[RMDB]
RNA sequence: GGGAACGACUCGAGUAGAGUCGAAAAAUCGCCGGGUUAGACAAAUUGCAUGAGCAAGUAACAAGAGUGAAGGUUAUAGAUUUAGCUUACGCCGAUGCGCUAGGGAGUGACCUGGCUUUUAAAAUCCACAAGACAAGGACUUCGGUCCUUGUCUUGUAAAAGAAACAACAACAACAAC
Reactivity to DMS in 0.01 (KOAc 150mM, MgCl2 10mM, bicine 150mM(pH8.5), 24C), signal-to-noise 2, nucleotides 027 to 126: a030u010c020g000c000c000g030g000g030u010u020a090g000a050c110a090a080a080u040u020g000c060a180u030g000a250g000c020a020a000g000u000a040a130c120a100a100g000a110g040u000g010a110a130g020g030u000u000a020u000a010g000a180u060u040u000a030g000c020u020u000a200c130g020c060c020g000a140u000g000c210g000c090u000a080g000g000g030a190g020u000g020a040c000c000u000g000g000c000u000u070u000u000a050a030a070a030u000c070c000
Reactivity to 2A3 in 0.01 (KOAc 150mM, MgCl2 10mM, bicine 150mM(pH8.5), 24C), signal-to-noise 1, nucleotides 027 to 126: a050u020c000g000c000c000g030g000g070u040u000a180g110a120c010a130a260a110u060u000g000c000a000u280g010a040g030c000a300a060g080u080a080a080c010a070a000g120a000g130u240g000a200a000g130g000u040u030a100u030a120g180a120u140u200u000a010g130c020u010u010a080c050g000c000c000g200a110u170g000c000g000c050u070a040g000g220g000a070g070u000g000a050c010c010u030g000g010c000u000u000u010u050a050a050a000a000u060c000c000